[RMDB]
RNA sequence: GGGAACGACUCGAGUAGAGUCGAAAAUCAUACUGGAUAGUAGACAUUAGGUGUCACGGUCUCUGCUAUCUAGUAUGAGCACCACAGGUAGACUAGACUGUGAUACCUAAUGUCUAUCUGUGGUGUAGUAUCACGAAGUAUUCGUACUUUGUGAUACAAAAGAAACAACAACAACAAC
Reactivity to DMS in 0.01 (KOAc 150mM, MgCl2 10mM, bicine 150mM(pH8.5), 24C), signal-to-noise 9, nucleotides 027 to 126: u020c040a070u020a020c030u000g000g010a040u010a040g010u000a010g000a020c050a020u000u000a020g000g020u010g010u010c030a030c020g000g010u000c030u000c090u010g000c010u000a000u000c000u000a080g010u010a030u010g000a090g010c070a050c070c050a050c030a010g010g010u000a000g000a070c080u010a040g010a040c040u010g010u000g000a050u010a020c030c010u000a020a020u010g000u000c000u000a000u010c020u000g010u010g000g010u010g010u010a090
Reactivity to 2A3 in 0.01 (KOAc 150mM, MgCl2 10mM, bicine 150mM(pH8.5), 24C), signal-to-noise 9, nucleotides 027 to 126: u080c010a010u020a050c010u030g030g010a010u010a020g020u010a010g020a020c020a040u060u090a050g000g040u100g050u120c040a030c050g020g010u000c010u000c010u020g000c000u000a000u000c000u000a010g000u000a010u020g000a010g020c010a010c000c010a000c010a000g000g010u000a000g000a040c020u010a010g010a020c040u060g040u060g110a050u080a060c000c000u010a030a020u070g000u000c000u000a000u000c000u000g010u000g010g020u010g000u010a030